[RMDB]
RNA sequence: GGGAACGACUCGAGUAGAGUCGAAAAGAUAUGGAUCCCAGUAGACAUGCGAUACAUUCGGAAACGAAUGUAAUCGCAACAGCUACAGGGAUCCUAAGUCAAAGCCCUCAACUUCGGUUGAGGGCAACCUAAAUCUUACCUUCGGGUAAGAUUUAGGAAAAGAAACAACAACAACAAC
Reactivity to 2A3 in 0.01 (KOAc 150mM, MgCl2 10mM, bicine 150mM(pH8.5), 24C), signal-to-noise 4, nucleotides 027 to 126: g000a000u010a000u060g000g000a000u000c010c000c030a020g000u000a000g000a060c300a300u300g000c000g000a000u000a000c010a010u000u000c000g010g010a010a010a010c000g000a010a000u010g000u010a020a020u010c000g010c000a010a010c050a010g000c000u000a010c020a020g000g020g000a000u000c000c000u010a010a000g000u000c010a050a080a110g000c010c000c000u000c010a010a030c010u070u120c300g170g000u000u000g000a000g000g000g000c000a000a000
Reactivity to DMS in 0.01 (KOAc 150mM, MgCl2 10mM, bicine 150mM(pH8.5), 24C), signal-to-noise 3, nucleotides 027 to 126: g010a020u000a030u010g000g000a010u000c000c000c000a090g030u000a000g010a020c050a270u030g020c000g010a010u000a010c000a010u000u000c000g020g000a010a010a020c000g000a010a010u000g000u000a020a050u000c000g020c000a070a020c230a110g000c000u000a010c010a110g010g010g000a000u000c000c000u000a000a070g000u000c010a130a130a180g000c000c010c000u010c000a000a000c000u000u020c210g030g000u010u000g010a010g000g010g010c000a000a000